[RMDB]
RNA sequence: GGGAACGACUCGAGUAGAGUCGAAAAUCGGUGAGGGUUUGAUGGCAGAGUUCCUGAAUCCAUCUUUGCUUUUCUUUUACAGAACGCAAUAUUCAUUAUAACAUGUCUUCUUUUAAUGAAUCAGUCGGUCUUGGCUACUUGAAGACACAUGCAAUUACCUCCGAGUAUUAUUCGUAAUACUCGGAGGAAAAGAAACAACAACAACAAC
Reactivity to DMS in 0.01 (KOAc 150mM, MgCl2 10mM, bicine 150mM(pH8.5), 24C), signal-to-noise 3, nucleotides 027 to 156: u000c050g020g020u000g020a120g030g030g020u000u010u010g010a070u000g010g020c090a110g020a120g030u010u000c020c020u000g010a100a190u000c040c060a050u000c060u000u000u000g020c010u000u000u000u010c000u010u010u010u010a210c130a090g000a040a040c160g000c050a090a130u010a100u010u010c000a080u000u000a060u010a050a070c020a040u000g020u000c070u010u000c040u000u000u000u000a050a060u000g000a070a030u000c070a110g030u000c060g010g020u000c060u000u000g030g020c050u000a070c100u000u000g010a050a030g010a070c040a050c060a070u000g000c030a060a080u000u000a130
Reactivity to 2A3 in 0.01 (KOAc 150mM, MgCl2 10mM, bicine 150mM(pH8.5), 24C), signal-to-noise 5, nucleotides 027 to 156: u100c070g020g010u030g000a060g030g010g000u050u080u120g030a030u040g010g010c050a030g030a030g110u070u060c000c010u020g040a020a040u040c040c010a050u030c000u050u030u060g020c000u200u120u080u050c000u020u220u040u100a080c080a040g040a050a020c050g010c040a020a040u030a040u110u040c020a020u000u140a060u040a170a070c100a140u100g030u000c000u030u010c000u040u180u020u070a070a050u070g040a030a050u090c020a050g060u080c040g070g000u020c070u100u150g020g000c020u060a070c040u110u080g000a010a000g000a000c010a010c000a040u110g070c030a040a180u110u080a130